Structure probing data (DMS) for a 177-nucleotide construct.
For DMS the reverse transcriptase was MarathonRT.
Reactivities are given for positions 27 through 126.
RNA sequence: GGGAACGACUCGAGUAGAGUCGAAAAGUCGUCGUCGACGAAGGCAGCUAAGUUGGUGACGCCGAGUGGAGUAAAGACGGAGAGUAGUUCUCCGCUAGUCGGAAAGACUCCGCAUCCUCCGGCAGACGUGGGAUAUCAAGUUCGCUUGAUAUCCCACAAAAGAAACAACAACAACAAC
Reactivity to DMS in 0.01 (KOAc 150mM, MgCl2 10mM, bicine 150mM(pH8.5), 24C), signal-to-noise 1, nucleotides 027 to 126: g030u000c010g000u020c000g000u000c030g040a090c000g010a230a090g020g010c120a070g030c030u030a040a280g000u000u000g000g010u010g000a070c030g000c020c050g000a180g040u000g000g030a100g010u000a040a060a070g000a070c040g020g010a040g020a040g010u000a130g010u000u000c040u000c030c030g010c060u010a030g030u000c040g060g000a160a050a070g050a060c000u030c000c070g000c110a160u000c010c030u000c050c000g030g000c070a220g030a120c160